[RMDB]
RNA sequence: GGGAACGACUCGAGUAGAGUCGAAAAGGGGUCAUAUAGCAAUCUAACCUGCUCGCAACAGCCCUACUGAAGCCUCCACGGUAGGGACAUGCGAGCCUGUUAGAGCUAUAUGACGGAGGCACCCAAACUCUCCUUAUCAGUUCGCUGAUAAGGAGAGGCUCCAUAAGGUCUUCGGACCUUAUGGAGCAAAAGAAACAACAACAACAAC
Reactivity to 2A3 in 0.01 (KOAc 150mM, MgCl2 10mM, bicine 150mM(pH8.5), 24C), signal-to-noise 2, nucleotides 027 to 156: g050g010g080g000u030c020a010u000a000u010a020g030c100a180a270u060c000u000a000a010c000c020u000g000c000u000c010g020c020a160a300c080a150g020c000c000c000u020a010c000u050g040a080a040g000c000c020u020c000c020a000c000g010g000u000a000g010g020g030a060c020a040u300g010c010g010a000g000c000c000u010g000u000u000a000g000a020g010c000u000a000u010a000u010g010a000c010g000g000a000g020g000c000a040c000c000c000a020a110a140c000u000c010u000c000c000u010u000a010u000c010a030g060u090u140c220g110c140u020g000a000u000a000a010g000g000a000g010a000g010

The record gives the reactivity of an RNA of 207 nucleotides to 2A3. It was measured as part of the RMDB library RNAMAK. The 2A3 profile rests on 1,544 reads. Values cover nucleotides 27 to 156. The RNA was probed in 150 mM KOAc, 10 mM MgCl2 and 150 mM bicine (pH 8.5) at 24 C.